This 177-nucleotide RNA was probed chemically with DMS.
Conditions: 150 mM KOAc, 10 mM MgCl2 and 150 mM bicine (pH 8.5), 24 C.
DMS adducts were read by reverse transcription with MarathonRT.
Source: RMDB library OK2TRN, as collected in RNAgym.
For DMS, 855 sequencing reads were counted.

[RMDB]
RNA sequence: GGGAACGACUCGAGUAGAGUCGAAAAACAGAACCCCAAUCUGGUUGGUGAGUUAUCAGACAGUUAGAUUUUAGCAAGUGGCUGACCAGGCUCUCUGUUACGCGGUUUUUACCUGCUGCACCUUGCAUCUUUGUGAAUCCUUCGGGAUUCACAAAGAAAAAGAAACAACAACAACAAC
Reactivity to DMS in 0.01 (KOAc 150mM, MgCl2 10mM, bicine 150mM(pH8.5), 24C), signal-to-noise 1, nucleotides 027 to 126: a020c050a100g000a060a100c090c010c010c020a050a070u000c020u010g020g000u000u010g010g020u000g010a130g010u010u000a120u000c110a020g010a070c090a000g000u000u020a060g000a120u010u000u000u000a060g020c040a030a050g020u000g010g020c020u010g000a080c130c040a060g000g010c090u000c060u000c030u000g010u000u010a070c220g040c080g020g000u000u010u020u030u000a120c000c000u000g000c030u000g030c060a080c060c020u000u000g000c070a190